RNA sequence: GGGAACGACUCGAGUAGAGUCGAAAAGGGGUCUUGAGACCUCCCUUGGAUUUAGUUUGCUUUUGACGACCUGAAGCCUCCACGGGUCGAUAAGCAAACUUGUCAGGGAGGAAUCUCAAGACGGAGGCACCCAAAGCGUAAGCUUCGGCUUACGCAACAUUGACACUAGCUUCGGCUAGUGUCAAUGAAAAGAAACAACAACAACAAC
Reactivity to 2A3 in 0.01 (KOAc 150mM, MgCl2 10mM, bicine 150mM(pH8.5), 24C), signal-to-noise 4, nucleotides 027 to 156: g060g000g020g010u000c000u010u010g010a020g010a030c000c000u000c000c000c000u060u160g220g010a070u290u220u110a040g000u000u000u000g000c020u040u070u080u180g190a150c030g000a000c000c000u040g040a140a040g070c040c070u120c030c030a060c020g000g020g000u000c000g020a020u010a030a010g000c000a000a000a000c000u000u020g010u010c030a020g000g000g000a020g000g020a020a040u000c000u000c000a000a000g000a000c000g000g030a010g000g020c040a070c010c010c000a030a070a020g000c000g000u000a010a000g000c000u030u160c300g100g000c000u010u000a000c000g000c000a000a000
Reactivity to DMS in 0.01 (KOAc 150mM, MgCl2 10mM, bicine 150mM(pH8.5), 24C), signal-to-noise 2, nucleotides 027 to 156: g020g000g060g000u000c000u000u000g000a040g020a090c010c000u000c000c020c000u000u000g020g000a080u000u000u000a010g010u000u000u000g010c010u000u000u000u000g000a300c050g010a030c010c010u010g010a060a130g020c050c030u010c040c060a300c020g020g000g010u000c000g020a050u010a010a040g020c000a020a010a000c010u000u000g030u010c020a070g000g000g000a050g000g020a040a070u000c020u000c020a000a030g030a020c000g020g020a060g000g050c020a140c030c010c010a120a090a160g020c010g020u000a020a010g010c010u000u000c300g060g030c010u000u000a010c000g010c000a070a080